[RMDB]
RNA sequence: GGGAACGACUCGAGUAGAGUCGAAAAUGGGAAUUAUCCCGUUCCACCCCCGCGGCACACUCCUUCCCCCCUGCGGGCCCCCCCAUAAGAUGGCAGGAACCCACUCAUUGGGGUCCGCUGUUCCAUUACGCGUCGUACUUCGGUACGACGAAAAGAAACAACAACAACAAC
Reactivity to DMS in 0.01 (KOAc 150mM, MgCl2 10mM, bicine 150mM(pH8.5), 24C), signal-to-noise 3, nucleotides 027 to 129: u000g020g000g000a000a110u030u090a050u010c000c000c000g030u000u030c050c000a130c210c080c010c000c040g030c140g000g070c050a130c130a130c110u000c080c040u060u030c000c000c000c000c000c000u040g000c070g010g030g030c000c010c000c000c090c080c040a030u040a000a140g020a040u010g010g080c040a070g050g000a030a100c000c000c000a010c280u040c110a250u000u000g020g070g030g020u010c000c000g000c040u020g030u010u050c070c050a090u040u040a090c140g000
Reactivity to 2A3 in 0.01 (KOAc 150mM, MgCl2 10mM, bicine 150mM(pH8.5), 24C), signal-to-noise 1, nucleotides 027 to 129: u030g010g020g010a020a000u250u090a140u170c000c000c000g010u040u020c000c000a040c000c040c000c000c040g000c000g020g080c010a040c000a000c160u110c060c050u000u070c010c000c000c000c000c000u040g000c050g000g000g020c010c040c000c000c070c000c000a000u010a000a090g100a030u090g050g000c100a010g040g000a000a010c000c000c000a000c010u160c060a070u000u130g000g000g000g000u000c000c070g050c010u000g020u030u060c040c000a030u040u070a000c050g010